[RMDB]
RNA sequence: GGGAACGACUCGAGUAGAGUCGAAAAGAAAAGAGCGUAAUCGCGUCUUGACGUGAGUGAGACUAGACUGUAGCCUAUCCCAAGUGGGAUAGGAUAUCUCACAAUACGCUGAUCUACAGUCAAAAGAAUUAGCUCCCGUAUUCGUACGGGAGCUAAUAAAAGAAACAACAACAACAAC
Reactivity to DMS in 0.01 (KOAc 150mM, MgCl2 10mM, bicine 150mM(pH8.5), 24C), signal-to-noise 2, nucleotides 027 to 126: g000a070a000a080a040g000a020g020c000g010u000a090a300u010c030g000c000g000u020c110u050u000g000a060c020g020u000g000a060g020u000g040a030g010a050c190u000a170g000a020c000u000g040u000a020g010c000c000u000a040u010c000c000c020a300a110g010u030g020g030g000a010u000a000g000g010a000u050a020u000c000u000c000a020c010a050a060u000a010c000g030c010u000g000a170u000c010u010a010c000a050g000u000c000a220a080a090a060g040a080
Reactivity to 2A3 in 0.01 (KOAc 150mM, MgCl2 10mM, bicine 150mM(pH8.5), 24C), signal-to-noise 5, nucleotides 027 to 126: g150a000a090a000a000g010a000g000c010g000u020a030a050u040c010g000c000g020u040c090u180u290g130a030c000g010u020g010a040g010u000g000a000g000a010c020u040a080g010a000c010u000g000u000a000g000c000c000u000a010u020c010c000c010a140a130g300u300g040g000g010a000u000a000g000g000a000u010a010u000c010u000c000a000c010a000a000u070a010c000g010c010u020g040a040u010c000u030a000c000a000g000u010c010a040a030a000a000g110a020